This 177-nucleotide RNA was probed chemically with DMS and 2A3. For DMS, 2,118 sequencing reads were counted. The RNA was probed in 150 mM KOAc, 10 mM MgCl2 and 150 mM bicine (pH 8.5) at 24 C. For 2A3 the reverse transcriptase was SuperScript II with manganese. It was measured as part of the RMDB library M2PK50.
[RMDB]
RNA sequence: GGGAACGACUCGAGUAGAGUCGAAAAGCACUCCUUUUCGAAGGAGUGCCCAGGCGCGCGGCCUUUGUCCAGUCGCGUGUGCGCCGCGCGCGAUAUACGCGCAUCUGUGCAUAUUCGUAUGCACAAAGUUAGUUGAGUACUUCGGUACUCAACUAACAAAAGAAACAACAACAACAAC
Reactivity to DMS in 0.01 (KOAc 150mM, MgCl2 10mM, bicine 150mM(pH8.5), 24C), signal-to-noise 2, nucleotides 027 to 126: g000c000a010c000u000c000c000u010u010u010u000c180g020a030a000g000g000a030g030u000g010c000c030c080a080g010g020c010g020c000g000c000g010g000c020c020u000u000u010g000u000c090c110a220g030u000c070g000c020g030u010g020u000g030c070g010c010c020g020c040g000c010g010c000g000a070u010a050u000a020c020g010c010g020c120a170u010c150u000g020u000g010c000a010u000a030u000u010c190g010u000a000u000g000c000a020c000a030a040a070
Reactivity to 2A3 in 0.01 (KOAc 150mM, MgCl2 10mM, bicine 150mM(pH8.5), 24C), signal-to-noise 2, nucleotides 027 to 126: g000c000a000c000u000c000c000u040u000u030u100c210g110a000a000g000g000a010g010u000g010c000c000c000a060g070g000c000g020c000g000c000g000g040c030c000u070u130u230g050u000c020c020a010g050u060c030g020c040g000u020g010u020g000c020g000c000c000g000c000g000c000g000c000g010a010u060a000u000a120c010g000c000g020c010a040u030c100u130g000u010g000c010a000u020a020u060u090c200g090u030a010u010g000c000a000c000a010a000a020